The record gives the reactivity of an RNA of 207 nucleotides to 2A3. The RNA was probed in 150 mM KOAc, 10 mM MgCl2 and 150 mM bicine (pH 8.5) at 24 C.
[RMDB]
RNA sequence: GGGAACGACUCGAGUAGAGUCGAAAAGGGGUCUGCCAUCUCUAGCGUGAGGCAUCGAUCAUGGGAGGCCUGAAGCCUCCACGGGCUCAUGGGAGCCUUCGGGUGGCAGACGGAGGCACCCAAAAUCAAGGAUCCGAGUUCGCUCGGAUCCUUGAAAGCGAAAGAUUAUGUUCGCAUAAUCUUUCGCAAAAGAAACAACAACAACAAC
Reactivity to 2A3 in 0.01 (KOAc 150mM, MgCl2 10mM, bicine 150mM(pH8.5), 24C), signal-to-noise 3, nucleotides 027 to 156: g000g020g000g010u000c000u010g020c020c000a020u010c040u030c060u170a090g150c080g280u300g120a010g010g010c020a040u300c030g020a000u000c000a000u020g180g300g070a090g140g170c000c000u010g010a030a010g000c000c010u030c010c000a010c000g010g010g000c040u040c150a010u010g020g000g000a010g000c000c000u040u110c030g000g010g000u020g000g000c000a010g010a000c000g000g000a010g010g000c000a030c000c000c000a010a020a000a130u030c000a000a000g000g000a000u010c000c000g020a010g020u070u150c220g060c110u010c000g000g000a000u030c000c000u000u000g000a010a010a000